Notes:
An RNA of 177 nucleotides, treated with DMS and read out base by base. The DMS profile rests on 1,159 reads. The reactions ran in a buffer of 150 mM KOAc, 10 mM MgCl2 and 150 mM bicine (pH 8.5), at 24 C. The data come from the RNA Mapping Database (RMDB), library OK2TRN.
RNA sequence: GGGAACGACUCGAGUAGAGUCGAAAAGGCUACCGGGGGGAAAAAUUCGGGCCAGGAAGCUCGCUCCGAACGCAUGACGUCCGGUGGGGUCGCCGAACGUCGUGAACUGCAGCUUGUCCGGUGCAGGACACCUAGGUCGAUUCGUCGACCUAGGUGUAAAAGAAACAACAACAACAAC
Reactivity to DMS in 0.01 (KOAc 150mM, MgCl2 10mM, bicine 150mM(pH8.5), 24C), signal-to-noise 1, nucleotides 027 to 126: g010g000c080u010a040c050c030g020g020g010g010g010g010a010a110a060a090a220u000u000c030g020g040g000c030c080a070g020g000a120a080g000c030u030c170g010c040u000c030c060g000a040a100c210g020c000a020u000g030a030c010g010u010c020c000g000g030u000g000g020g000g010u000c050g020c030c000g000a010a020c040g010u000c010g020u000g020a060a110c060u000g000c050a030g030c010u020u000g000u010c060c080g010g000u000g000c040a040g020g030